Structure probing data (DMS and 2A3) for a 177-nucleotide construct. The RNA was probed in 150 mM KOAc, 10 mM MgCl2 and 150 mM bicine (pH 8.5) at 24 C. It was measured as part of the RMDB library M2PK90. For DMS the reverse transcriptase was MarathonRT. 2A3 adducts were read by reverse transcription with SuperScript II with manganese.
RNA sequence: GGGAACGACUCGAGUAGAGUCGAAAAAUAAAGAGCGUAAACGCGUCUUUGAGUGACGUGAAGAUCAUCCAAGUGUGCUGUCUACAGUCGUAGAUAGCGCACAUUACGCUAAGAUGAUCAUAAAAAAGAUUUAUUUAAUCUUCGGAUUAAAUAAAUCAAAAGAAACAACAACAACAAC
Reactivity to DMS in 0.01 (KOAc 150mM, MgCl2 10mM, bicine 150mM(pH8.5), 24C), signal-to-noise 4, nucleotides 027 to 126: a100u020a050a070a060g010a110g020c000g010u000a040a080a200c070g000c000g000u000c000u000u010u010g000a140g010u010g010a010c010g000u000g010a110a100g010a010u000c010a010u000c000c090a080a080g010u000g010u000g010c010u000g010u000c000u010a000c000a210g020u010c210g010u000a010g000a010u000a000g000c000g020c000a010c000a050u010u000a040c020g000c020u000a120a100g000a020u000g000a010u000c010a130u000a000a030a060a090a060a100
Reactivity to 2A3 in 0.01 (KOAc 150mM, MgCl2 10mM, bicine 150mM(pH8.5), 24C), signal-to-noise 6, nucleotides 027 to 126: a010u270a020a080a030g070a010g000c020g030u040a050a090a050c020g000c010g000u000c020u140u170u270g160a190g080u110g010a000c000g010u020g070a120a030g000a020u010c000a000u010c040c060a110a100g010u000g000u000g000c000u000g010u000c000u010a060c070a260g170u300c200g000u100a000g010a000u010a000g000c000g010c010a000c000a000u010u010a000c010g000c010u010a020a020g010a000u020g010a000u000c020a060u270a030a130a020a010a010a020